[RMDB]
RNA sequence: GGGAACGACUCGAGUAGAGUCGAAAAUUGCACAGACUUCCAUAUUUGUAGACUGGCGGUCAUACAAUUAUGCUGUGUCUAGUGCCUUCUGGUUAUUCACCCACAUUCCAAUGGCGGGUUUGGUACGGUUAAUCUACAUGUUCGCAUGUAGAUUAACAAAAGAAACAACAACAACAAC
Reactivity to 2A3 in 0.01 (KOAc 150mM, MgCl2 10mM, bicine 150mM(pH8.5), 24C), signal-to-noise 6, nucleotides 027 to 126: u070u090g000c000a000c000a010g020a010c020u160u020c050c010a010u010a010u030u040u010g010u000a010g010a020c020u050g220g120c120g110g000u010c010a020u010a020c000a010a020u020u010a010u040g050c080u030g020u020g020u100c010u040a060g010u010g010c000c010u060u070c040u040g080g020u090u060a070u090u090c020a020c000c030c000a020c010a040u170u080c030c030a110a060u040g040g020c080g010g010g000u020u060u080g030g010u050a030c060g030
Reactivity to DMS in 0.01 (KOAc 150mM, MgCl2 10mM, bicine 150mM(pH8.5), 24C), signal-to-noise 7, nucleotides 027 to 126: u010u010g010c010a010c020a040g000a020c020u000u010c250c000a010u000a020u000u000u000g010u000a020g000a050c030u000g010g020c230g030g010u000c040a100u010a010c010a000a010u000u000a010u000g020c050u000g010u000g000u000c040u000a090g030u000g000c000c290u000u000c090u010g000g010u000u010a070u000u010c220a090c020c000c020a060c060a060u000u010c150c150a090a060u000g000g010c110g010g010g000u000u000u010g010g000u000a060c130g010